[RMDB]
RNA sequence: GGGAACGACUCGAGUAGAGUCGAAAACUCCCCUCAAAAUCGUUUCAGUGCAAAAUUGAUUCGGCGGCCCUGUCAUGAGGCCGAAACGAAGGCACGUACCCCUUCGAAUGGCGUCGGGGAGUCAGCGAAAGCACUGACCCUUUCGAGGGUCAGUGAAGAAUAGACUAAGUUUCGACUUAGUCUAUUCAAAAGAAACAACAACAACAAC
Reactivity to 2A3 in 0.01 (KOAc 150mM, MgCl2 10mM, bicine 150mM(pH8.5), 24C), signal-to-noise 3, nucleotides 027 to 156: c020u000c000c010c020c000u110c050a180a180a120a170u090c010g010u010u040u010c020a040g010u020g110c070a110a100a180a230u050u050g010a050u020u020c020g060g000c020g000g000c040c000c000u070g050u100c030a120u100g010a040g030g020c000c000g030a010a000a000c000g010a000a000g000g000c100a000c120g080u120a080c010c000c030c000u010u020c010g050a090a080u080g030g010c050g020u100c060g020g000g000g020a020g020u030c010a010g030c050g140a110a010a000g060c010a000c000u000g000a000c000c000c000u020u070u040c110g070a010g000g010g000u010c000a000g000u020g000a020a060
Reactivity to DMS in 0.01 (KOAc 150mM, MgCl2 10mM, bicine 150mM(pH8.5), 24C), signal-to-noise 2, nucleotides 027 to 156: c040u010c010c000c000c040u010c060a020a070a080a080u000c020g020u000u000u000c020a120g030u000g040c060a100a110a160a140u000u010g020a080u020u010c030g060g030c000g010g020c000c000c000u010g040u000c240a060u000g000a080g010g040c010c000g000a030a010a090c030g020a040a010g020g010c050a080c080g020u000a150c050c050c010c000u000u000c040g000a100a100u010g020g000c010g010u000c100g000g000g000g000a060g020u000c020a100g000c050g000a090a110a230g010c000a030c000u000g030a010c000c000c000u000u010u000c230g010a030g010g010g010u010c000a010g000u010g000a020a100